[RMDB]
RNA sequence: GGGAACGACUCGAGUAGAGUCGAAAAAUACAAGGGGAGGUUUCGGCCAAAUGUUGUAUGCAGAAGGCGUGAGGAAGGUAGCACUUAGACACUCACGAGUAGCGGUUCGGCAGUAGUGCUAAAAUGAGACAGUACGAAAAGUUCGCUUUUCGUACAAGAAUAGUGGAAACUUCGGUUUCCACUAUUCAAAAGAAACAACAACAACAAC
Reactivity to DMS in 0.01 (KOAc 150mM, MgCl2 10mM, bicine 150mM(pH8.5), 24C), signal-to-noise 2, nucleotides 027 to 156: a150u010a060c040a040a050g010g040g010g000a100g000g040u000u000u000c060g020g000c010c030a040a090a190u010g030u000u000g030u000a070u000g030c020a080g000a040a050g000g040c030g000u000g000a070g010g010a050a060g020g040u000a080g040c030a070c040u020u000a120g020a110c060a100c050u000c060a100c050g020a110g040u000a090g020c060g000g000u000u000c070g010g000c060a070g040u000a030g020u000g020c010u000a020a030a090a110u010g010a190g000a060c080a070g010u000a010c010g000a010a010a010a010g020u020u010c300g020c000u000u000u000u000c000g010u000a010c010a030a060
Reactivity to 2A3 in 0.01 (KOAc 150mM, MgCl2 10mM, bicine 150mM(pH8.5), 24C), signal-to-noise 3, nucleotides 027 to 156: a000u100a030c100a040a080g000g000g030g010a070g010g060u030u060u150c100g060g010c020c020a040a080a080u100g010u050u050g030u070a050u070g010c040a010g010a120a010g060g000c020g020u030g010a040g010g030a060a040g040g010u070a030g020c020a010c060u080u070a030g020a040c020a030c090u050c010a050c020g020a030g020u090a010g060c060g050g030u060u060c030g020g000c020a040g030u090a000g000u000g020c010u060a070a020a000a100u100g000a040g020a040c070a040g000u000a000c000g010a000a000a000a000g030u040u030c090g060c080u010u000u000u000c000g000u000a000c000a010a000
Chemical mapping of a 207-nucleotide RNA with DMS and 2A3.
The DMS profile rests on 3,905 reads.
For 2A3, 1,780 sequencing reads were counted.
The data come from the RNA Mapping Database (RMDB), library M2RFPK.